RNA sequence: GGGAACGACUCGAGUAGAGUCGAAAACAGGUAGAUUCGUCUACCUGCUGCUCUCCUAAGUCUGCACGUUUGACGGGGAGAAUCCAGUCGGAAACGACUGAACAUUCGAAGAACCCGAGUGCAGAUAUGGACUCUAAAGGGGGAUUCGUCCCCCUAACCGUAUCAAAAAUUUCGAUUUUUGAUACGGAAAAGAAACAACAACAACAAC
Reactivity to 2A3 in 0.01 (KOAc 150mM, MgCl2 10mM, bicine 150mM(pH8.5), 24C), signal-to-noise 4, nucleotides 027 to 156: c000a000g000g000u010a000g020a040u060u110c240g050u000c130u000a000c000c000u000g000c020u030g010c000u010c000u000c000c000u060a150a050g020u010c000u000g010c010a020c040g060u130u300u300g150a070c020g040g000g000g010a130g010a010a000u060c100c000a000g000u000c000g020g010a060a050a100c010g010a000c000u000g000a040a030c030a020u010u020c040g110a250a100g030a130a090c020c000c010g020a020g010u000g000c000a000g000a000u000a000u000g010g000a010c030u050c070u300a120a160a160g000g000g010g010g000a010u070u060c090g040u020c020c000c010c000c000u000a020a000
Reactivity to DMS in 0.01 (KOAc 150mM, MgCl2 10mM, bicine 150mM(pH8.5), 24C), signal-to-noise 2, nucleotides 027 to 156: c010a010g020g010u000a010g000a050u000u010c280g030u000c000u000a020c000c000u000g020c030u000g000c120u000c040u000c020c030u020a090a300g020u000c000u040g010c020a030c000g000u010u020u010g020a180c060g040g030g030g000a180g000a110a060u000c010c000a000g000u000c000g020g010a150a120a250c030g020a020c000u000g010a010a020c020a150u000u000c040g000a200a120g000a100a230c000c000c010g020a200g000u000g000c000a010g030a040u000a150u000g010g020a040c080u000c050u000a030a090a030g020g010g000g010g020a080u000u010c070g000u000c020c030c000c000c000u000a000a030
An RNA of 207 nucleotides, treated with 2A3 and DMS and read out base by base. The data come from the RNA Mapping Database (RMDB), library RNAMAK. The reactions ran in a buffer of 150 mM KOAc, 10 mM MgCl2 and 150 mM bicine (pH 8.5), at 24 C. Reactivities are given for positions 27 through 156.